Structure probing data (2A3 and DMS) for a 177-nucleotide construct.
[RMDB]
RNA sequence: GGGAACGACUCGAGUAGAGUCGAAAACUUAGCAACGCGAUAGAGCGCCAACGUGGCACGCGGACUUGCCCCAUAGUCGAGCCAACGGGUAAAGGGCAACGACUCAUCAGUACUGCGCGAGGCGACAGGGGUACAAUUAAUUCGUUAAUUGUACCCCAAAAGAAACAACAACAACAAC
Reactivity to 2A3 in 0.01 (KOAc 150mM, MgCl2 10mM, bicine 150mM(pH8.5), 24C), signal-to-noise 4, nucleotides 027 to 126: c000u060u070a010g050c020a030a100c030g010c030g120a110u080a210g150a070g060c010g000c020c010a070a050c050g040u030g020g010c030a000c030g200c060g030g030a040c010u020u060g010c020c000c000c010a030u070a060g250u020c020g010a010g070c040c030a090a100c060g030g000g040u080a090a090a050g010g020g000c030a050a020c050g090a050c020u030c050a130u060c000a060g050u080a040c020u040g010c010g000c010g070a090g010g000c020g010a020c030a050
Reactivity to DMS in 0.01 (KOAc 150mM, MgCl2 10mM, bicine 150mM(pH8.5), 24C), signal-to-noise 5, nucleotides 027 to 126: c060u000u000a100g000c050a050a060c070g030c080g000a120u010a080g000a130g000c030g020c020c040a140a080c100g030u000g000g000c030a030c050g000c080g000g000a110c120u000u010g000c030c010c010c080a160u010a050g010u000c010g010a160g010c060c170a060a090c040g010g000g010u010a030a160a060g020g010g030c030a020a050c080g000a180c060u000c050a080u010c100a110g030u000a050c040u000g010c030g000c030g000a140g010g010c020g010a100c160a100
The RNA was probed in 150 mM KOAc, 10 mM MgCl2 and 150 mM bicine (pH 8.5) at 24 C. Reactivities are rounded to 0.1 and cut off at 0 and 3. For DMS, 4,581 sequencing reads were counted.